[RMDB]
RNA sequence: GGGAACGACUCGAGUAGAGUCGAAAAGGAGGAUUCCGCUCCUUUGCGCUUUUUUUUCGGAUUAGGCGUGGAGGCGAAAGUCACCCUCCUCGCAUCGCUAGUUCGUGCUUGCGACUUACACGUAGGGAAAAACCCAUUGACUUCGGUCAAUGGGUAAGUAUGCUAUCUCCUUCGGGAGAUAGCAUACAAAAGAAACAACAACAACAAC
Reactivity to DMS in 0.01 (KOAc 150mM, MgCl2 10mM, bicine 150mM(pH8.5), 24C), signal-to-noise 1, nucleotides 027 to 156: g000g010a050g030g000a230u000u000c050c050g030c000u000c010c030u010u000u010g030c040g000c000u000u000u000u000u000u000u000u000c180g000g000a100u010u000a040g030g020c000g050u000g020g030a020g020g020c060g000a040a040a070g000u010c070a110c110c000c000u000c020c000u000c030g000c140a050u000c060g010c040u000a060g020u000u000c080g030u000g010c030u000u020g010c010g020a140c030u000u000a100c070a030c070g020u010a070g000g000g000a040a040a030a080a110c010c000c000a020u000u000g000a020c000u000u010c270g070g030u000c000a020a000u000g010g000g010u000a000a020
Reactivity to 2A3 in 0.01 (KOAc 150mM, MgCl2 10mM, bicine 150mM(pH8.5), 24C), signal-to-noise 3, nucleotides 027 to 156: g000g010a000g040g040a120u130u090c040c040g050c060u040c010c000u000u010u030g000c000g000c000u040u090u040u020u000u030u100u120c090g040g020a010u030u050a030g020g020c010g000u010g000g030a000g010g000c080g140a300a070a010g100u120c040a050c020c000c000u010c000c010u000c010g050c010a020u090c000g010c040u020a010g040u030u080c070g060u140g060c030u050u050g010c010g030a080c010u070u140a040c030a010c100g190u210a120g020g010g000a030a120a020a020a010c000c000c000a000u000u000g000a000c010u040u090c190g060g010u010c000a010a010u020g010g000g000u000a000a000